[RMDB]
RNA sequence: GGGAACGACUCGAGUAGAGUCGAAAAUCUCACUGGCUUAGGUGAGUCCUUUAAGAAAGUUGCAACCAUACCGUAUAAGGUUUGCAACUCUGUUAAGGAUACUCUGGCUUAUUAUGCUCACAGCGUGUACCGUCGCGAUUCGUCGCGACGAAAAGAAACAACAACAACAAC
Reactivity to 2A3 in 0.01 (KOAc 150mM, MgCl2 10mM, bicine 150mM(pH8.5), 24C), signal-to-noise 5, nucleotides 027 to 129: u030c010u000c000a010c050u040g030g050c030u120u250a080g000g060u040g030a050g030u020c000c000u000u010u010a010a040g020a040a090a020g000u000u000g000c000a000a000c020c020a070u140a180c050c000g100u150a100u050a230a100g040g020u040u020u070g000c000a000a000c000u000c010u020g170u090u050a000a000g000g020a020u020a150c000u000c020u020g000g000c000u030u060a120u080u100a070u140g020c030u030c030a120c020a020g020c000g050u050g030u040a040c020
Reactivity to DMS in 0.01 (KOAc 150mM, MgCl2 10mM, bicine 150mM(pH8.5), 24C), signal-to-noise 4, nucleotides 027 to 129: u030c000u000c010a160c170u100g030g010c020u110u040a040g040g020u030g080a220g010u060c000c020u000u000u000a040a050g020a000a000a000g000u000u000g000c030a020a040c060c060a110u040a080c150c260g050u040a200u110a090a080g010g020u040u010u050g030c000a020a040c020u030c010u000g030u040u050a000a080g000g000a030u050a030c090u010c020u040g000g040c020u010u040a130u120u040a020u120g010c000u050c080a070c140a050g010c050g030u000g000u010a070c080

An RNA of 170 nucleotides, treated with 2A3 and DMS and read out base by base. For DMS the reverse transcriptase was MarathonRT. For 2A3 the reverse transcriptase was SuperScript II with manganese. Source: RMDB library 15KLIB, as collected in RNAgym. The reactions ran in a buffer of 150 mM KOAc, 10 mM MgCl2 and 150 mM bicine (pH 8.5), at 24 C.